[RMDB]
RNA sequence: GGGAACGACUCGAGUAGAGUCGAAAAUUACGAGAGGAGGUGCUAAGUGUCUCCAUGGAAAAUCCUGACGCCUCAGAGGUAAUCCGUCGGAUCGUGGGAGAGCUACGUCUCUUGCGAGCUACCUCAACGGCCUAAUUUAGUUCGCUAAAUUAGGCCGAAAAGAAACAACAACAACAAC
Reactivity to DMS in 0.01 (KOAc 150mM, MgCl2 10mM, bicine 150mM(pH8.5), 24C), signal-to-noise 2, nucleotides 027 to 126: u020u070a070c000g020a030g030a120g000g020a110g020g010u000g020c060u000a040a170g000u050g000u000c010u010c030c080a080u020g000g000a100a010a090a050u000c030c000u000g010a240c130g000c120c050u010c120a140g030a030g030g050u000a010a170u020c060c030g000u000c110g000g000a120u000c010g000u000g010g040g020a040g010a110g020c130u000a080c280g010u010c020u000c000u000u000g010c000g000a000g010c060u000a040c060c000u000c040a100a100
Reactivity to 2A3 in 0.01 (KOAc 150mM, MgCl2 10mM, bicine 150mM(pH8.5), 24C), signal-to-noise 4, nucleotides 027 to 126: u130u050a050c090g030a020g040a100g120g020a000g010g000u050g050c040u170a210a100g050u020g060u120c010u000c000c010a010u040g030g020a080a010a010a060u040c000c030u050g040a020c070g080c070c000u050c050a030g010a040g080g040u060a140a020u130c020c040g040u080c060g030g000a060u010c010g000u000g030g060g000a040g000a020g060c110u130a040c050g130u020c000u000c000u000u000g000c000g020a020g030c020u060a040c000c000u010c020a120a050
Structure probing data (DMS and 2A3) for a 177-nucleotide construct. 2A3 adducts were read by reverse transcription with SuperScript II with manganese. The RNA was probed in 150 mM KOAc, 10 mM MgCl2 and 150 mM bicine (pH 8.5) at 24 C.